[RMDB]
Source: RMDB libraries RFM100 and RFMREP, as collected in RNAgym.
Chemical mapping of a 177-nucleotide RNA with DMS and 2A3.
The reactions ran in a buffer of 150 mM KOAc, 10 mM MgCl2 and 150 mM bicine (pH 8.5), at 24 C.
The 2A3 profile rests on 1,560 reads.
For DMS the reverse transcriptase was MarathonRT.
RNA sequence: GGGAACGACUCGAGUAGAGUCGAAAAAGCUGCGGACUACGGUCCGCAGCAAGAUGGAAUGGCACUCCUAUCAAAAGUGAAAGCACUAAUGUGGAGGUAUUUGGAUGGGAGGAAUUUGAGAGAGGAAAUUCAGACUGUCAUUCGUGACAGUCUGAAUAAAAGAAACAACAACAACAAC
Reactivity to DMS in 0.01 (KOAc 150mM, MgCl2 10mM, bicine 150mM(pH8.5), 24C), signal-to-noise 2, nucleotides 027 to 126: a080g010c000u000g040c000g000g000a030c000u010a110c200g020g000u000c000c000g050c010a000g010c010a040a020g000a060u000g000g020a060a080u010g020g060c090a180c020u000c000c000u000a010u000c040a060a030a070a030g010u000g010a140a080a110g040c020a020c070u020a100a090u040g000u010g000g060a100g030g030u060a020u000u010u000g010g030a020u000g000g000g000a010g000g000a060a070u010u000u000g000a080g000a030g000a050g000g000a040a060
Reactivity to 2A3 in 0.01 (KOAc 150mM, MgCl2 10mM, bicine 150mM(pH8.5), 24C), signal-to-noise 4, nucleotides 027 to 126: a000g000c000u000g000c030g000g010a000c020u070a010c300g130g010u000c000c000g000c030a000g000c000a000a000g010a010u120g010g060a090a040u040g030g020c070a020c070u000c000c000u050a050u160c070a020a180a030a000g030u070g110a200a060a020g130c010a030c070u150a170a170u220g010u040g040g060a050g020g070u080a140u020u090u110g090g000a050u030g020g010g000a010g050g040a060a030u110u180u220g030a070g010a000g000a020g010g100a060a070